Record summary
Chemical mapping of a 207-nucleotide RNA with 2A3 and DMS.

[RMDB]
RNA sequence: GGGAACGACUCGAGUAGAGUCGAAAAGUAAUAGAUAACUGGAUGCAGCGUAGGGUCCAACGCAUAUCCAGUACGAAUGGUACCUGUAAAUAAAAUAUGGACCCUAGUACAAGUACCAACAGAAGGAUAAGCGAUGGUGAUGUCAAUCACAUUUGCAGUAUUAUCCCUAGUUCGCUAGGGAUAAUACAAAAGAAACAACAACAACAAC
Reactivity to 2A3 in 0.01 (KOAc 150mM, MgCl2 10mM, bicine 150mM(pH8.5), 24C), signal-to-noise 6, nucleotides 027 to 156: g030u050a020a100u050a120g110a090u100a150a080c000u000g000g000a020u040g100c200a130g000c280g010u020a040g000g010g000u000c000c000a000a010c010g000c010a010u020a010u200c000c000a000g010u010a010c020g070a090a130u070g010g000u010a010c000c030u010g020u040a000a100a090u180a030a110a080a050u150a060u030g010g000a000c000c000c000u010a010g000u000a000c000a020a000g010u000a010c020c010a010a040c040a040g150a120a040g100g010a060u070a140a070g000c030g040a010u040g090g120u010g010a030u040g080u190c090a090a050u030c010a040c010a090u070u080u230g010c030a010
Reactivity to DMS in 0.01 (KOAc 150mM, MgCl2 10mM, bicine 150mM(pH8.5), 24C), signal-to-noise 3, nucleotides 027 to 156: g010u000a060a110u000a120g010a110u010a100a050c030u000g020g000a030u010g030c110a030g000c040g050u000a110g000g030g000u000c030c010a150a060c050g020c010a090u000a100u000c000c010a010g020u010a120c100g000a090a080u000g040g000u000a010c010c010u010g030u000a000a120a150u000a110a090a090a180u000a120u020g000g020a040c000c000c020u000a030g050u010a060c020a020a020g020u010a010c010c020a040a200c110a070g000a080a090g010g010a120u010a050a140g050c040g050a090u000g030g020u000g030a070u000g000u000c180a070a140u010c050a020c040a100u000u000u010g060c040a200